[RMDB]
RNA sequence: GGGAACGACUCGAGUAGAGUCGAAAAGAUAUGGAUCCAGGUAGCUUUUGACGAACAAACCGUCGGAAACGACGGCUAGUUCGAUAAGCUACUGGAUCCUAAGUCAAAAGCCAUCUUCGGAUGGCAACAUGGCUAAGAUGUUCGCAUCUUAGCCAUGAAAAGAAACAACAACAACAAC
Reactivity to 2A3 in 0.01 (KOAc 150mM, MgCl2 10mM, bicine 150mM(pH8.5), 24C), signal-to-noise 3, nucleotides 027 to 126: g030a000u080a020u150g010g000a000u010c020c020a060g240g300u050a010g020c020u140u150u140u300g300a200c070g000a010a010c010a000a050a010c010c000g030u010c010g040g000a070a070a030c000g000a000c020g000g000c000u000a000g010u000u000c000g000a000u020a000a000g000c000u000a000c000u010g010g010a000u000c010c000u010a020a010g030u000c030a020a010a060a150g000c000c000a000u000c010u060u100c300g200g000a000u010g010g000c010a000a010
Reactivity to DMS in 0.01 (KOAc 150mM, MgCl2 10mM, bicine 150mM(pH8.5), 24C), signal-to-noise 3, nucleotides 027 to 126: g000a050u010a300u000g000g000a000u000c000c000a010g030g010u000a000g030c000u000u000u020u010g020a300c130g040a010a010c000a030a110a220c000c010g010u000c000g000g010a080a110a220c000g000a010c000g000g000c030u010a280g020u010u010c000g010a070u010a000a020g010c000u000a010c010u000g000g000a000u000c000c000u000a010a070g010u000c020a070a090a070a090g000c010c000a020u000c000u000u010c240g000g000a030u000g000g010c010a000a060

An RNA of 177 nucleotides, treated with 2A3 and DMS and read out base by base.
Values cover nucleotides 27 to 126.
DMS adducts were read by reverse transcription with MarathonRT.
Source: RMDB library TTRDES, as collected in RNAgym.
For 2A3, 9,022 sequencing reads were counted.